[RMDB]
RNA sequence: GGGAACGACUCGAGUAGAGUCGAAAACUCCCAUCCAACUCCUAUUCCUACACGUCCUCGUCGUACAGAGUGGUAACAUGUGUCACCACAUAUCCAAGCUUGGGUACACGGGCUUGACCCAACCCCUAAAACAGAGACGAGUUCGCUCGUCUCUGAAGAUCCUUUGAAUGUUCGCAUUCAAAGGAUCAAAAGAAACAACAACAACAAC
Reactivity to DMS in 0.01 (KOAc 150mM, MgCl2 10mM, bicine 150mM(pH8.5), 24C), signal-to-noise 1, nucleotides 027 to 156: c080u000c000c000c040a160u010c060c030a070a150c030u000c020c030u000a070u000u000c030c050u000a140c080a130c080g000u000c000c020u000c050g000u000c080g040u010a150c070a070g000a130g010u030g010g000u000a040a030c040a150u010g000u010g020u000c000a050c000c000a030c010a100u010a060u010c030c030a050a130g050c090u000u000g040g000g030u000a150c080a100c030g010g000g000c000u000u010g030a220c010c040c020a070a070c010c000c010c010u000a040a120a090a230c030a010g000a030g010a010c000g010a030g020u000u000c220g060c010u000c000g010u010c000u010c000u000g010a020a080
Reactivity to 2A3 in 0.01 (KOAc 150mM, MgCl2 10mM, bicine 150mM(pH8.5), 24C), signal-to-noise 4, nucleotides 027 to 156: c030u030c000c000c000a010u070c050c030a050a050c030u030c010c010u030a060u070u040c000c000u050a050c040a010c080g070u060c000c030u030c020g060u040c030g030u050a060c030a050g120a030g060u020g010g020u050a090a010c040a120u210g090u060g060u130c020a000c050c000a020c010a040u090a030u040c030c010a040a020g030c060u090u050g020g040g000u040a020c040a020c060g010g010g020c030u110u120g070a160c010c020c010a010a050c010c000c000c000u040a030a030a000a060c000a000g000a000g010a000c000g000a000g010u020u040c150g040c060u000c000g000u000c000u000c000u000g000a000a000

Chemical mapping of a 207-nucleotide RNA with DMS and 2A3. The RNA was probed in 150 mM KOAc, 10 mM MgCl2 and 150 mM bicine (pH 8.5) at 24 C. For DMS, 2,379 sequencing reads were counted.